[RMDB]
RNA sequence: GGGAACGACUCGAGUAGAGUCGAAAACGACCGCACCGGAGCGCUAGAAAAGGUCCUCGGACUUUCUUCUAUCUCCGAAGCCGGUUUGAGGCCCGGCGAAACGCGGGCCUGUCUCCUAAGAUGCCUCCGCUAGUCGAGCGGACUUGGCCUCUUCCGCCUCUAUUCUCACGUUCGCGUGAGAAUAGAGAAAAGAAACAACAACAACAAC
Reactivity to 2A3 in 0.01 (KOAc 150mM, MgCl2 10mM, bicine 150mM(pH8.5), 24C), signal-to-noise 1, nucleotides 027 to 156: c060g000a000c000c010g000c000a030c170c000g010g020a020g020c050g070c090u020a000g000a000a000a000a000g010g000u000c000c010u100c220g140g000a000c000u010u010u000c050u000u000c010u060a300u300c000u000c000c000g000a000a010g000c020c010g000g030u050u020u140g020a010g000g000c000c010c060g140g020c090g160a240a170a030c160g020c010g100g050g000c020c000u000g000u000c030u000c010c020u050a010a010g000a000u030g000c010c000u040c000c000g020c040u100a120g160u300c050g160a010g000c000g020g000a020c080u060u110g000g010c000c010u000c020u010u000c100c110g160c000